Annotation: Chemical mapping of a 177-nucleotide RNA with DMS and 2A3. Conditions: 150 mM KOAc, 10 mM MgCl2 and 150 mM bicine (pH 8.5), 24 C. High 2A3 reactivity points to a flexible backbone, as in loops and unpaired stretches. It was measured as part of the RMDB library OK2TRN.
RNA sequence: GGGAACGACUCGAGUAGAGUCGAAAAGGCUCAGGACGAACGCUGGCGGCGUGCCUAAUACAUGCAAGUAGAACGCUGAGGACUGGUGCUUGCACCGGUCCAAGGAGUUGCGAACGGGUGAGUAACGGACACUACAACGUUUCGACGUUGUAGUGUCAAAAGAAACAACAACAACAAC
Reactivity to DMS in 0.01 (KOAc 150mM, MgCl2 10mM, bicine 150mM(pH8.5), 24C), signal-to-noise 4, nucleotides 027 to 126: g000g010c040u000c050a100g010g020a110c080g010a080a070c080g040c030u000g000g020c070g000g030c040g000u000g020c010c050u000a070a060u010a070c080a040u010g000c110a060a090g010u000a080g020a070a050c030g020c000u000g000a300g000g000a030c000u000g020g010u000g000c020u020u000g000c000a020c010c000g000g010u010c000c010a030a080g010g000a030g010u000u000g000c030g010a090a110c110g000g020g000u010g000a110g040u000a080a120c180g000
Reactivity to 2A3 in 0.01 (KOAc 150mM, MgCl2 10mM, bicine 150mM(pH8.5), 24C), signal-to-noise 2, nucleotides 027 to 126: g080g000c000u020c040a020g080g070a050c040g030a120a000c030g000c080u030g060g010c040g000g020c040g030u040g020c020c020u090a100a030u150a060c040a030u080g120c040a090a000g010u030a010g050a060a000c040g000c040u000g030a030g020g000a000c000u000g000g020u010g010c030u080u130g010c010a010c000c000g020g000u000c000c000a000a010g000g000a040g000u040u060g190c020g010a030a000c020g000g020g040u010g020a070g030u020a080a060c100g050
DMS (dimethyl sulfate) methylates the pairing face of unpaired adenines and cytosines.